Conditions: 150 mM KOAc, 10 mM MgCl2 and 150 mM bicine (pH 8.5), 24 C. Structure probing data (DMS and 2A3) for a 207-nucleotide construct.
RNA sequence: GGGAACGACUCGAGUAGAGUCGAAAAUGAUGGUCACUGGCAGCGUGACAACCGGACGGGCCUUGCAGACCUGGCUAAGACAGUCUGUGGCCGCGCAGACCACCGUGGUCGCAGUAAGGGAGGAGGUGGCCUCCGCGUAGGCCGCUGCCGACUCCACUCUUGAUACCUUAUUCGUAAGGUAUCAAGAAAAAGAAACAACAACAACAAC
Reactivity to DMS in 0.01 (KOAc 150mM, MgCl2 10mM, bicine 150mM(pH8.5), 24C), signal-to-noise 3, nucleotides 027 to 156: u010g010a110u000g030g020u000c030a150c100u000g020g040c020a070g000c020g020u000g030a050c020a040a080c050c050g000g010a050c040g010g020g010c000c000u010u000g010c080a200g010a110c030c010u000g030g020c050u020a090a140g020a150c070a300g000u000c010u000g030u000g030g000c020c010g020c050g020c050a130g000a180c060c040a080c080c010g060u000g010g010u010c010g010c020a060g030u000a080a110g020g020g010a150g010g010a170g020g000u000g020g030c000c000u000c000c050g000c180g000u000a100g020g000c030c020g010c020u010g000c000c020g010a100c020u010c010c030a090c180
Reactivity to 2A3 in 0.01 (KOAc 150mM, MgCl2 10mM, bicine 150mM(pH8.5), 24C), signal-to-noise 4, nucleotides 027 to 156: u110g090a030u040g000g010u040c050a030c170u080g030g000c000a010g000c010g120u130g030a080c040a020a020c010c000g030g020a040c100g040g010g000c020c020u050u100g040c060a040g050a200c010c010u020g070g000c050u100a140a020g070a110c040a050g040u060c000u000g010u020g030g000c000c020g000c010g000c010a060g020a090c020c020a020c040c030g010u010g000g010u010c010g000c010a030g020u120a080a110g050g000g000a050g000g020a010g010g000u050g040g050c000c010u010c000c000g050c050g030u050a020g210g000c000c000g020c020u010g000c000c000g000a010c010u010c020c020a050c040
For 2A3 the reverse transcriptase was SuperScript II with manganese. The 2A3 profile rests on 4,601 reads.